The record gives the reactivity of an RNA of 177 nucleotides to DMS and 2A3. The reactions ran in a buffer of 150 mM KOAc, 10 mM MgCl2 and 150 mM bicine (pH 8.5), at 24 C. Reactivities are rounded to 0.1 and cut off at 0 and 3.
RNA sequence: GGGAACGACUCGAGUAGAGUCGAAAAUCGGGUGGCUUCGUCACCUGAAUUGUAGUCUGGAGAGGCGUCCUCAGCGACGGACCGGGCCCAAGUUCCCUGGAAAGGGACGCCUGGGAGGGUGAGAGCCAGGCGUAAGACGUUUCGACGUCUUACGCCUAAAAGAAACAACAACAACAAC
Reactivity to DMS in 0.01 (KOAc 150mM, MgCl2 10mM, bicine 150mM(pH8.5), 24C), signal-to-noise 2, nucleotides 027 to 126: u010c010g000g000g000u020g000g020c000u080u040c150g020u000c000a020c000c000u030g000a020a050u000u030g030u010a050g010u040c060u000g010g000a160g000a110g020g040c010g000u000c030c010u010c090a090g010c050g000a050c100g000g000a150c040c040g000g000g010c000c110c070a100a130g020u000u020c010c000c010u000g000g020a110a080a080g020g000g000a020c060g010c020c010u000g000g000g020a110g000g000g010u000g000a130g000a140g000c130c070
Reactivity to 2A3 in 0.01 (KOAc 150mM, MgCl2 10mM, bicine 150mM(pH8.5), 24C), signal-to-noise 3, nucleotides 027 to 126: u110c020g000g030g020u030g010g000c050u140u090c250g040u010c030a000c000c000u000g010a030a020u110u030g090u080a070g020u000c090u060g080g000a100g010a030g130g000c040g000u010c000c030u050c080a040g070c060g100a070c050g020g040a030c010c020g000g000g040c010c020c000a030a030g020u120u080c000c000c000u010g080g090a080a050a120g030g020g010a000c000g000c000c000u010g020g000g040a170g050g000g000u040g020a040g000a000g050c020c000